Overview:
Source: RMDB library RFM100, as collected in RNAgym. The record gives the reactivity of an RNA of 177 nucleotides to 2A3 and DMS.
RNA sequence: GGGAACGACUCGAGUAGAGUCGAAAAACCGCACGCGAGUGGGGGGUGGCAGCUGAGAGGCACUUUUGUGUCGGCUUCUGGGCCACCUCUUGUGGGUGUGUGGGGACCUGUCAGAGUUCAGGCGACCUUGGACCAAAUCUUUCGAGAUUUGGUCCAAAAAAGAAACAACAACAACAAC
Reactivity to 2A3 in 0.01 (KOAc 150mM, MgCl2 10mM, bicine 150mM(pH8.5), 24C), signal-to-noise 2, nucleotides 027 to 126: a000c010c010g050c020a020c000g050c050g020a120g050u090g000g000g000g000g010g070u000g020g000c020a130g090c020u010g010a000g000a000g010g060c010a000c060u130u080u300u300g040u000g000u010c040g130g060c010u170u060c050u110g020g000g040c000c000a010c020c000u000c040u000u030g000u040g020g190g000u000g000u000g000u010g010g020g010g020a020c000c000u010g020u100c030a060g020a040g230u120u030c010a000g010g010c000g000a050c010c040
Reactivity to DMS in 0.01 (KOAc 150mM, MgCl2 10mM, bicine 150mM(pH8.5), 24C), signal-to-noise 2, nucleotides 027 to 126: a100c040c000g020c010a040c010g010c000g000a300g020u030g030g020g020g000g010g010u000g000g010c000a030g020c120u000g000a050g030a270g000g000c000a050c000u040u070u000u040g010u010g000u000c000g010g000c020u040u000c020u000g000g000g000c000c000a000c000c000u000c000u000u000g010u070g030g010g000u010g000u000g030u010g020g000g000g020a130c000c000u000g050u000c060a080g000a300g000u020u000c000a020g010g010c010g000a200c110c080

Reactivities are given for positions 27 through 126. The DMS profile rests on 2,620 reads. Conditions: 150 mM KOAc, 10 mM MgCl2 and 150 mM bicine (pH 8.5), 24 C.